Background: This 207-nucleotide RNA was probed chemically with DMS and 2A3. The reactions ran in a buffer of 150 mM KOAc, 10 mM MgCl2 and 150 mM bicine (pH 8.5), at 24 C.
[RMDB]
RNA sequence: GGGAACGACUCGAGUAGAGUCGAAAAGGGCGGUUCACUGGAUCCGAAGCCUCUAGAAGGAUAAUAUAGGCACUCCAUACCCUACUCCGACUCAAUACGUCCCCGUCGUACAGAAUGGUAACAUAUCGAACACAACCUAACUUCGGUUAGGUUGUAAUCACUUGUCUAUCUUCGGAUAGACAAGUGAAAAAGAAACAACAACAACAAC
Reactivity to DMS in 0.01 (KOAc 150mM, MgCl2 10mM, bicine 150mM(pH8.5), 24C), signal-to-noise 1, nucleotides 027 to 156: g070g020g030c010g030g010u020u000c050a100c170u000g020g000a060u000c020c000g000a130a220g000c050c010u020c020u020a110g050a170a120g040g000a110u000a080a060u000a140u020a100g020g000c100a080c040u000c020c000a230u010a030c020c000c030u000a140c080u000c090c020g010a090c020u000c020a100a090u000a040c040g010u000c000c000c000c000g000u000c050g120u020a150c110a170g080a170a140u000g040g020u000a050a230c050a050u000a120u000c040g010a140a110c160a020c000a010a010c010c020u020a000a030c010u000u000c300g050g030u000u000a010g020g000u000u020g000u000a050a090
Reactivity to 2A3 in 0.01 (KOAc 150mM, MgCl2 10mM, bicine 150mM(pH8.5), 24C), signal-to-noise 4, nucleotides 027 to 156: g000g000g000c100g000g030u050u050c040a010c070u030g020g020a080u190c040c060g030a040a020g020c050c000u000c040u040a230g100a300a070g160g000a070u100a230a080u210a170u090a180g010g010c030a010c050u000c020c000a020u050a040c000c000c000u010a030c010u000c020c010g010a020c000u010c000a010a120u070a090c010g020u010c010c010c000c020g080u050c010g030u060a040c020a080g040a130a170u070g050g020u090a090a010c020a120u190a080u150c040g040a100a040c020a000c010a070a000c000c000u000a000a020c000u030u050c070g020g000u010u010a000g000g000u000u000g010u000a000a000